Chemical mapping of a 177-nucleotide RNA with 2A3 and DMS. DMS adducts were read by reverse transcription with MarathonRT. The reactions ran in a buffer of 150 mM KOAc, 10 mM MgCl2 and 150 mM bicine (pH 8.5), at 24 C. It was measured as part of the RMDB libraries RFM100 and RFMREP.
[RMDB]
RNA sequence: GGGAACGACUCGAGUAGAGUCGAAAAAGGCUCGGUCCUCUCCACGUGGUCCUGACCUGUCCUCUGUGAGCAAGAGAAACAGGACUGGUUUGGGGGUGUCCUGUCUCAGUGGACACAGGACACCACGAUACAAAAAGGCUUUCGAGCCUUUUUGUAUAAAAGAAACAACAACAACAAC
Reactivity to 2A3 in 0.01 (KOAc 150mM, MgCl2 10mM, bicine 150mM(pH8.5), 24C), signal-to-noise 7, nucleotides 027 to 126: a000g120g010c040u050c080g060g020u090c010c010u020c000u000c010c000a060c050g050u080g020g040u050c000c010u030g030a070c000c000u010g010u030c000c010u050c040u030g060u050g090a120g080c100a160a040g050a020g030a090a090a030c030a020g000g020a020c020u040g030g050u060u120u170g090g000g000g010g020u030g000u000c000c000u000g020u020c010u000c050a220g060u230g130g000a010c000a000c000a020g010g000a000c000a000c010c000a010c010g030
Reactivity to DMS in 0.01 (KOAc 150mM, MgCl2 10mM, bicine 150mM(pH8.5), 24C), signal-to-noise 7, nucleotides 027 to 126: a090g000g010c010u000c060g010g010u010c000c010u010c040u010c030c050a140c110g020u010g000g010u020c010c010u000g000a080c070c040u010g010u010c040c000u000c050u000g010u020g010a110g020c200a150a050g000a070g000a110a120a070c060a020g000g000a090c040u010g010g010u010u010u010g010g010g000g010g020u000g010u000c000c000u000g000u000c130u000c020a210g010u030g010g000a030c090a030c010a000g000g000a030c000a030c000c010a020c060g000